An RNA of 177 nucleotides, treated with DMS and 2A3 and read out base by base. It was measured as part of the RMDB library M2PK90.
RNA sequence: GGGAACGACUCGAGUAGAGUCGAAAAAUACAGUACGAAAGUACAAAGAUGCAAUCAAACCGAGCAGUGAAAUGAUGGCUUCAGUCCAAAAUGGGCAAACACUGCAGACGGAGCCAAAGGCAAAUAACCGUACACUUUGAUUCGUCAAAGUGUACGGAAAAGAAACAACAACAACAAC
Reactivity to DMS in 0.01 (KOAc 150mM, MgCl2 10mM, bicine 150mM(pH8.5), 24C), signal-to-noise 2, nucleotides 027 to 126: a030u020a080c120a160g000u000a000c010g000a120a090a060g010u000a000c040a060a090a060g000a100u000g000c040a140a100u000c100a070a210a150c020c010g010a180g000c000a000g000u000g020a050a090a070u000g010a180u000g000g020c020u020u020c100a130g060u000c000c020a040a050a120a090u000g030g000g000c050a050a080a170c070a030c020u000g020c050a050g020a140c080g040g010a020g010c020c010a020a080a100g000g010c050a030a020a130u000a120a080
Reactivity to 2A3 in 0.01 (KOAc 150mM, MgCl2 10mM, bicine 150mM(pH8.5), 24C), signal-to-noise 2, nucleotides 027 to 126: a000u180a040c050a050g040u020a010c040g060a160a040a030g060u000a000c010a000a130a000g140a030u090g050c030a020a070u090c050a070a050a060c000c000g030a020g020c000a000g010u020g120a080a060a090u110g090a050u090g050g000c040u200u140c080a030g000u040c000c000a010a030a130a270u130g000g030g000c010a000a040a000c030a000c020u030g000c020a040g020a040c000g010g000a000g020c020c020a100a040a030g050g000c060a120a080a010u090a120a040